Notes
An RNA of 207 nucleotides, treated with 2A3 and DMS and read out base by base. Reactivities are given for positions 27 through 156. It was measured as part of the RMDB library ARCHII. The DMS profile rests on 1,552 reads. 2A3 adducts were read by reverse transcription with SuperScript II with manganese. The reactions ran in a buffer of 150 mM KOAc, 10 mM MgCl2 and 150 mM bicine (pH 8.5), at 24 C.
RNA sequence: GGGAACGACUCGAGUAGAGUCGAAAAGAGGUGCAGAGACUCAAUGGAACGCUGUUCUCAAAUGGAGUUGGUGAAGAGGGGUAUAUACAGAGUGUAUCAAACGAUUCACCCACAGCGUGUAGAUUUUUUCACGAACGAAUUAUUAUUCAUCAUCGGAGCAAAUAGAUUGGUUCGCCAAUCUAUUUGCAAAAGAAACAACAACAACAAC
Reactivity to 2A3 in 0.01 (KOAc 150mM, MgCl2 10mM, bicine 150mM(pH8.5), 24C), signal-to-noise 2, nucleotides 027 to 156: g050a000g010g010u050g050c060a000g030a020g000a110c020u040c140a050a070u100g030g000a040a000c010g050c170u030g000u160u020c090u010c000a130a200a070u130g090g000a050g040u070u070g010g000u030g000a020a020g020a020g040g000g000g030u100a080u000a000u010a080c070a030g150a000g130u050g010u010a050u050c050a070a130a000c020g000a020u030u010c000a020c000c000c000a030c020a000g000c060g000u020g010u050a040g110a130u040u010u030u040u130u200c060a050c090g010a090a020c020g000a050a030u010u100a050u090u120a120u050u270c040a090u020c000a040u010c030g060g010a020
Reactivity to DMS in 0.01 (KOAc 150mM, MgCl2 10mM, bicine 150mM(pH8.5), 24C), signal-to-noise 1, nucleotides 027 to 156: g000a120g050g000u020g020c020a130g000a230g000a020c020u010c050a070a230u000g010g020a100a020c040g000c000u000g030u000u010c060u000c040a040a030a170u000g020g000a080g020u000u020g010g010u000g010a020a060g020a130g010g030g030g020u000a070u000a060u020a300c000a110g020a160g070u000g060u000a060u000c040a130a070a120c030g000a170u000u010c010a030c000c000c070a080c030a070g010c000g030u010g070u010a030g010a110u000u000u010u000u000u040c070a130c000g000a030a060c070g000a020a070u000u000a010u010u000a120u010u000c030a070u000c030a110u000c020g000g030a240